[RMDB]
RNA sequence: GGGAACGACUCGAGUAGAGUCGAAAAGGCUCGGACGGCGGGAUCGUCGGCGAAGCGGCCGUCGAUUUCAUCCGUCAGUUCAAGGUCGAUUACGCCGUGAUCGGCGCGUCGGCGAUCGACAUGGACGGCGCGCUUCUCGACUAUGAUUUUCGCGAAGGUUUUCUGUAGAUUUCGAUCUACAGAAAACAAAAGAAACAACAACAACAAC
Reactivity to 2A3 in 0.01 (KOAc 150mM, MgCl2 10mM, bicine 150mM(pH8.5), 24C), signal-to-noise 3, nucleotides 027 to 156: g030g000c030u050c070g050g060a030c050g060g000c020g020g030g000a050u040c030g000u000c000g010g020c140g030a080a020g060c060g040g000c010c000g010u010c010g090a070u030u110u100c060a060u090c070c040g030u020c040a010g010u050u110c100a100a040g120g020u010c010g010a000u020u100a060c070g000c090c080g030u090g040a180u190c070g030g010c060g030c030g080u050c010g010g020c020g020a050u040c020g010a000c010a030u060g070g010a000c010g020g020c150g000c000g000c000u010u010c010u000c000g020a020c020u060a070u210g050a090u070u020u130u180c020g000c030g120a080a090g060
Conditions: 150 mM KOAc, 10 mM MgCl2 and 150 mM bicine (pH 8.5), 24 C. The record gives the reactivity of an RNA of 207 nucleotides to 2A3. For 2A3 the reverse transcriptase was SuperScript II with manganese.